[RMDB]
Annotation: Source: RMDB library M2RFPK, as collected in RNAgym. The record gives the reactivity of an RNA of 207 nucleotides to DMS and 2A3. Values cover nucleotides 27 to 156. DMS adducts were read by reverse transcription with MarathonRT.
RNA sequence: GGGAACGACUCGAGUAGAGUCGAAAAAGACGGAAACCCAUCGACUGUCACCAGAUGCUGCAUCACCUGAUCACUGAUGGCUCAACGGUAUCCUGCGGUACAACUGAAUACUUGUAGCUGCCUUUUGAAAAGGAGUUCAUCUUCGGAUGAACUCCAAGUAGAUAAUGGAGUUCGCUCCAUUAUCUACAAAAGAAACAACAACAACAAC
Reactivity to DMS in 0.01 (KOAc 150mM, MgCl2 10mM, bicine 150mM(pH8.5), 24C), signal-to-noise 2, nucleotides 027 to 156: a070g010a100c020g010g020a090a060a170c080c010c020a080u000c020g010a130c030u000g020u000c000a060c040c010a110g010a090u000g010c070u000g010c060a110u010c040a060c010c010u010g000a090u010c100a090c070u010g030a090u000g030g010c040u000c030a010a110c050g010g020u000a040u000c010c030u010g010c020g010g030u000a020c040a080a110c020u000g020a090a050u000a050c040u000u000g040u000a080g010c000u000g010c010c120u000u000u000u000g020a080a100a140a180g020g010a040g020u000u000c000a010u000c000u000u010c260g090g010a030u000g000a010a010c000u010c000c000a010a040
Reactivity to 2A3 in 0.01 (KOAc 150mM, MgCl2 10mM, bicine 150mM(pH8.5), 24C), signal-to-noise 8, nucleotides 027 to 156: a000g040a000c050g050g010a060a060a050c010c010c000a050u080c050g090a090c050u040g010u060c020a020c040c010a030g030a120u100g040c060u050g050c020a030u030c010a030c020c020u050g040a060u060c030a020c080u040g020a030u040g070g000c020u030c060a050a060c040g020g020u020a060u040c010c020u030g010c020g030g000u040a030c040a060a010c090u110g060a110a030u060a140c030u040u090g020u050a020g050c030u030g040c010c020u070u120u070u170g080a100a090a030a040g010g000a000g000u000u000c000a000u000c000u030u070c160g070g000a000u010g000a000a000c000u000c000c000a000a000

Overview:
The RNA was probed in 150 mM KOAc, 10 mM MgCl2 and 150 mM bicine (pH 8.5) at 24 C.